[RMDB]
Structure probing data (DMS and 2A3) for a 177-nucleotide construct. The DMS profile rests on 1,889 reads. For 2A3, 1,928 sequencing reads were counted.
RNA sequence: GGGAACGACUCGAGUAGAGUCGAAAAGAUUAUACAAGUAACAAGUCAUCACACCAAUCUGCGUGCAAAGGACUUAGCACUAGAUUAUCCGGUUGUUACACAAGAUGCCGACAUUGACGAGGCGUACCAACAGCGAUUGAUUCGUCAAUCGCUGUUGAAAAGAAACAACAACAACAAC
Reactivity to DMS in 0.01 (KOAc 150mM, MgCl2 10mM, bicine 150mM(pH8.5), 24C), signal-to-noise 3, nucleotides 027 to 126: g020a060u000u000a130u000a180c110a090a070g010u010a060a080c040a030a130g000u010c050a070u020c140a070c090a040c170c080a090a030u000c020u010g010c150g000u000g020c040a020a110a160g020g020a080c130u010u000a100g020c060a020c020u010a040g000a010u000u010a040u010c120c090g000g030u000u000g010u000u000a030c040a100c170a030a080g000a020u000g030c090c020g020a070c080a090u000u000g000a130c060g010a180g000g010c020g010u000a040c150
Reactivity to 2A3 in 0.01 (KOAc 150mM, MgCl2 10mM, bicine 150mM(pH8.5), 24C), signal-to-noise 3, nucleotides 027 to 126: g000a020u090u130a060u110a210c110a110a110g020u030a070a030c020a030a010g130u100c010a040u050c020a030c010a010c140c030a010a070u000c010u090g090c120g120u020g000c050a130a110a160g120g060a090c000u080u120a010g010c020a010c000u000a010g000a070u030u050a020u130c090c020g070g040u040u020g020u010u070a030c050a000c030a080a050g040a120u100g020c020c000g030a070c070a140u100u250g040a030c070g010a030g010g110c020g010u060a110c030